[RMDB]
RNA sequence: GGGAACGACUCGAGUAGAGUCGAAAAAUAAAGUACAACCAGAUGUGCCGACUUCUGGCGGAGCUCAGUUACCACGGAUUCGCCUCGGCCAAUAACCUUCAGACCCUCGGCGAAGAGUACACGGGGACCUAUCGGUACCAUUCGUGGUACCGAUAGGAAAAGAAACAACAACAACAAC
Reactivity to 2A3 in 0.01 (KOAc 150mM, MgCl2 10mM, bicine 150mM(pH8.5), 24C), signal-to-noise 5, nucleotides 027 to 126: a000u160a030a040a020g140u130a040c050a050a070c100c040a010g060a170u090g090u140g050c000c010g030a050c070u080u050c080u190g000g010c000g020g020a020g040c010u020c150a050g040u090u150a090c050c040a040c080g040g010a080u040u040c000g000c000c000u020c020g010g000c000c000a020a000u080a030a010c010c020u080u120c030a040g040a180c030c000c000u050c060g030g000c030g050a090a040g040a060g150u040a010c060a030c030g040g000g010g020a010
Reactivity to DMS in 0.01 (KOAc 150mM, MgCl2 10mM, bicine 150mM(pH8.5), 24C), signal-to-noise 2, nucleotides 027 to 126: a100u040a020a020a050g000u000a060c140a150a080c070c050a050g040a060u000g020u040g000c040c010g000a100c150u000u030c080u010g000g000c120g020g000a140g030c060u040c060a060g000u030u040a030c140c050a090c090g000g000a090u010u000c040g000c010c000u010c300g010g040c040c120a080a080u060a080a080c070c020u000u030c040a070g000a090c040c000c020u000c040g000g010c040g000a050a020g000a060g030u000a020c170a130c090g000g000g010g030a110
Record summary: This 177-nucleotide RNA was probed chemically with 2A3 and DMS. DMS adducts were read by reverse transcription with MarathonRT. Values cover nucleotides 27 to 126. Conditions: 150 mM KOAc, 10 mM MgCl2 and 150 mM bicine (pH 8.5), 24 C.